[RMDB]
RNA sequence: GGGAACGACUCGAGUAGAGUCGAAAAAUUGAGAAAAUCACCAAAUAAGAUGAUAUUCUACUGGUACUGAAGAGUUAAUAAUACUCAUCUAUCUUUGUGUUACUCACCUGUCAGGAACCUCCCAGGAAUGGGUUGAUCGUAUAUUUUAUUGUACGUGGGUAAGAGAUAAGUUCGCUUAUCUCUUACCAAAAGAAACAACAACAACAAC
Reactivity to 2A3 in 0.01 (KOAc 150mM, MgCl2 10mM, bicine 150mM(pH8.5), 24C), signal-to-noise 4, nucleotides 027 to 156: a000u050u040g020a020g030a040a130a020a070u100c010a030c010c010a030a030a030u140a070a040g020a020u020g010a010u010a050u080u090c040u070a110c070u060g100g060u110a060c040u130g090a140a060g030a070g090u110u100a060a030u140a110a020u060a110c040u010c010a020u010c040u040a030u000c060u050u030u030g010u000g010u040u060a050c000u000c020a020c010c030u100g050u150c040a030g010g050a040a060c000c020u000c000c000c010a000g030g110a070a080u080g020g000g000u040u050g020a030u040c010g000u020a020u010a010u030u250u140u070a050u110u090g020u020a030c030g010u060g100
Reactivity to DMS in 0.01 (KOAc 150mM, MgCl2 10mM, bicine 150mM(pH8.5), 24C), signal-to-noise 3, nucleotides 027 to 156: a150u000u000g010a120g010a050a060a130a050u000c000a010c010c010a060a060a170u010a150a140g020a030u000g010a050u010a060u010u000c040u000a090c050u010g010g010u010a300c050u010g020a080a100g000a080g000u000u010a060a070u020a040a040u010a020c060u000c050a100u000c030u010a100u010c150u000u000u020g020u010g020u000u000a060c010u000c040a060c020c010u000g020u000c060a050g000g000a110a030c030c030u000c010c010c020a090g010g020a100a120u010g020g050g030u000u000g010a060u000c020g030u010a020u000a040u000u000u000u000a050u070u000g020u000a020c020g010u000g000
An RNA of 207 nucleotides, treated with 2A3 and DMS and read out base by base. The reactions ran in a buffer of 150 mM KOAc, 10 mM MgCl2 and 150 mM bicine (pH 8.5), at 24 C. The data come from the RNA Mapping Database (RMDB), library OK3TST. The DMS profile rests on 6,026 reads. For 2A3, 2,662 sequencing reads were counted.